[RMDB]
RNA sequence: GGGAACGACUCGAGUAGAGUCGAAAAGAAAGAAAAUCGGACAACCAAACAGACGAAUGCCGUGUAAGGUUGUAACGGCAAAAACGUCUCGAAAGAGUAAAAGAAGCUCAAAACGAGACCAAAGAAAAGGCGCUAAAUUAUUCGUAAUUUAGCGCCUAAAAGAAACAACAACAACAAC
Reactivity to DMS in 0.01 (KOAc 150mM, MgCl2 10mM, bicine 150mM(pH8.5), 24C), signal-to-noise 2, nucleotides 027 to 126: g050a000a170a080g000a060a100a170a110u150c000g000g000a010c080a170a130c030c000a210a030a240c140a030g070a020c170g000a120a190u080g200c010c000g000u000g000u120a150a250g040g150u000u000g000u000a000a060c000g000g010c070a040a120a040a120a080c270g000u000c000u000c010g070a120a050a280g010a000g070u000a090a180a100a030g040a070a270g030c000u000c000a010a060a050a200c010g000a000g000a050c000c300a040a070a050g000a000a030a100
Reactivity to 2A3 in 0.01 (KOAc 150mM, MgCl2 10mM, bicine 150mM(pH8.5), 24C), signal-to-noise 1, nucleotides 027 to 126: g020a030a100a000g100a080a110a040a000u140c000g010g100a000c030a000a020c000c000a050a040a050c030a030g090a120c070g020a220a020u070g000c010c000g000u000g000u050a080a150g000g000u000u020g000u000a000a130c080g000g000c010a000a000a000a000a000c030g000u000c000u000c000g040a050a170a130g080a000g020u100a080a070a170a080g210a200a090g000c000u000c000a100a080a030a000c050g000a000g000a000c000c000a050a200a000g170a000a100a000
This 177-nucleotide RNA was probed chemically with DMS and 2A3. For 2A3 the reverse transcriptase was SuperScript II with manganese. Source: RMDB library OK1LIB, as collected in RNAgym. For DMS, 1,062 sequencing reads were counted. Conditions: 150 mM KOAc, 10 mM MgCl2 and 150 mM bicine (pH 8.5), 24 C.